The data come from the RNA Mapping Database (RMDB), library RFM100. Chemical mapping of a 177-nucleotide RNA with DMS and 2A3. The reactions ran in a buffer of 150 mM KOAc, 10 mM MgCl2 and 150 mM bicine (pH 8.5), at 24 C.
RNA sequence: GGGAACGACUCGAGUAGAGUCGAAAAGUGCUUAAUAGGAUUGAACAAAGUCCCUCAAAUCUUGAUCCAUCUGUCACUUUGUCAGCAGUCUUAAUUGGUUUCUUGCUGAUCAUUAUAUGAUGGGAAAUACAGAUAGGACCUUCGGGUCCUAUCUGUAAAAAGAAACAACAACAACAAC
Reactivity to DMS in 0.01 (KOAc 150mM, MgCl2 10mM, bicine 150mM(pH8.5), 24C), signal-to-noise 2, nucleotides 027 to 126: g090u000g020c040u000u000a080a150u010a140g000g020a300u040u020g020a090a090c230a060a020a170g000u020c000c000c020u030c200a070a090a100u020c030u000u050g000a170u020c010c000a050u000c030u000g000u000c060a040c080u000u000u010g000u000c020a030g040c020a110g030u060c010u010u010a160a200u020u000g000g000u000u010u010c020u010u000g020c010u000g000a030u010c030a030u000u030a030u030a080u060g020a000u000g000g000g000a000a020a090
Reactivity to 2A3 in 0.01 (KOAc 150mM, MgCl2 10mM, bicine 150mM(pH8.5), 24C), signal-to-noise 4, nucleotides 027 to 126: g050u040g050c080u150u130a100a010u080a250g000g050a030u020u150g040a000a030c050a160a080a000g070u060c000c050c010u090c030a070a120a060u040c030u090u150g020a120u100c010c000a010u030c020u050g070u100c070a060c110u030u050u050g030u020c000a020g000c010a010g070u000c010u070u300a300a300u200u120g100g000u100u050u080c010u040u040g010c010u010g000a040u010c020a010u010u170a190u020a100u210g030a010u010g030g040g010a000a060a000